[RMDB]
An RNA of 177 nucleotides, treated with 2A3 and DMS and read out base by base. Conditions: 150 mM KOAc, 10 mM MgCl2 and 150 mM bicine (pH 8.5), 24 C. Values cover nucleotides 27 to 126. For 2A3, 1,054 sequencing reads were counted. For DMS, 1,920 sequencing reads were counted.

RNA sequence: GGGAACGACUCGAGUAGAGUCGAAAACUACGGGAGGCUGCAGCAACGAAUCUUCCGCAAUGGGCGCAAGCCUGACGGAGCAAUGCCGCGUGCGGGAUGAAGCGUCUUGACGUGUAAACCGCUGUCAUACCAACGGGGUUUUCGAACCCCGUUGGUAAAAAGAAACAACAACAACAAC
Reactivity to 2A3 in 0.01 (KOAc 150mM, MgCl2 10mM, bicine 150mM(pH8.5), 24C), signal-to-noise 2, nucleotides 027 to 126: c000u070a040c030g000g000g030a140g030g000c010u040g000c030a070g000c030a010a040c020g120a080a100u020c040u070u000c030c000g020c060a010a120u230g020g000g000c020g030c010a010a060g000c000c000u000g020a020c010g040g000a000g010c000a000a190u100g030c040c000g010c050g040u050g010c000g000g000g010a040u300g040a070a000g050c020g000u000c000u110u150g090a000c000g000u020g000u050a000a000a000c000c000g010c080u070g070u070c060a060
Reactivity to DMS in 0.01 (KOAc 150mM, MgCl2 10mM, bicine 150mM(pH8.5), 24C), signal-to-noise 2, nucleotides 027 to 126: c000u000a020c120g000g050g000a100g000g010c070u020g000c020a060g050c060a060a020c060g010a070a110u000c000u000u020c000c080g040c170a050a070u000g030g040g000c030g030c230a090a130g000c000c010u020g000a170c090g000g000a020g000c090a080a170u000g000c000c000g000c050g070u020g060c000g020g000g020a040u080g020a150a300g000c100g000u000c050u050u000g000a000c040g020u000g000u000a020a300a300c010c040g000c020u000g020u080c030a170